[RMDB]
RNA sequence: GGGAACGACUCGAGUAGAGUCGAAAACUAAUACUGCUACAUUUUUAAGACCCUUAGUUAUUUAGCUUUACCGCCCAGGAUGGGGUGCAGCGUUCCUGCAAUAUCCAGGGCACCUAGGUGCAGCCUUCAUGCCUCAUGCCGUUCGCGGCAUGAGGAAGACAAUCUUUAACUUCGGUUAAAGAUUGUCAAAAGAAACAACAACAACAAC
Reactivity to 2A3 in 0.01 (KOAc 150mM, MgCl2 10mM, bicine 150mM(pH8.5), 24C), signal-to-noise 3, nucleotides 027 to 156: c000u050a000a140u090a190c070u080g070c030u050a050c050a200u230u110u070u100u130a140a080g090a160c020c010c000u070u070a040g050u040u090a170u180u170u100a030g020c030u050u040u050a030c030c010g010c010c000c000a000g030g000a010u030g020g040g040g070u020g010c010a000g010c020g090u120u100c000c010u020g030c000a010a020u030a000u140c010c030a010g000g000g000c000a020c000c030u030a020g020g020u030g080c030a030g030c000c030u010u110c040a100u140g040c020c000u000c010a000u000g000c020c000g050u060u040c230g020c000g120g000c000a000u000g000a000g010g010a000a000